The data come from the RNA Mapping Database (RMDB), library M2PK50. Structure probing data (2A3 and DMS) for a 177-nucleotide construct. In probing experiments dimethyl sulfate is read out at A N1 and C N3, which are open when not base-paired. For DMS the reverse transcriptase was MarathonRT. For 2A3 the reverse transcriptase was SuperScript II with manganese.
[RMDB]
RNA sequence: GGGAACGACUCGAGUAGAGUCGAAAAUGGACUGCGUUCGCGCAGUCCAAAAGAAUAGACGAACACUAGCGUAGAUGUGUUCAGGUCACAUAACUACGCAAAAAAGCUGAGUGUUCGCACUCAGCAAGGUAGUUUAACUCUUCGGAGUUAAACUACCAAAAGAAACAACAACAACAAC
Reactivity to 2A3 in 0.01 (KOAc 150mM, MgCl2 10mM, bicine 150mM(pH8.5), 24C), signal-to-noise 2, nucleotides 027 to 126: u040g000g000a010c000u010g000c000g030u010u040c110g000c010g020c100a000g030u020c000c000a010a010a000a000g010a040a040u140a080g130a050c080g040a110a010c000a030c130u080a070g000c010g000u000a000g010a070u040g010u010g010u060u070c070a020g120g070u070c010a010c000a100u060a120a100c020u000a000c000g000c000a040a070a000a030a000a060g030c010u010g000a000g010u000g000u050u050c160g000c000a010c010u000c010a010g010c020a010a010
Reactivity to DMS in 0.01 (KOAc 150mM, MgCl2 10mM, bicine 150mM(pH8.5), 24C), signal-to-noise 2, nucleotides 027 to 126: u000g000g000a010c000u010g010c000g000u000u000c150g010c010g030c000a000g010u000c000c000a010a000a040a150g010a090a110u010a090g020a160c120g000a010a050c100a040c040u010a100g000c000g030u000a000g020a090u000g010u000g000u000u000c120a090g000g000u000c020a030c090a020u000a030a150c000u010a020c000g060c020a020a020a090a040a080a060g030c020u000g000a030g020u000g010u010u010c160g020c000a000c000u000c000a000g000c030a010a010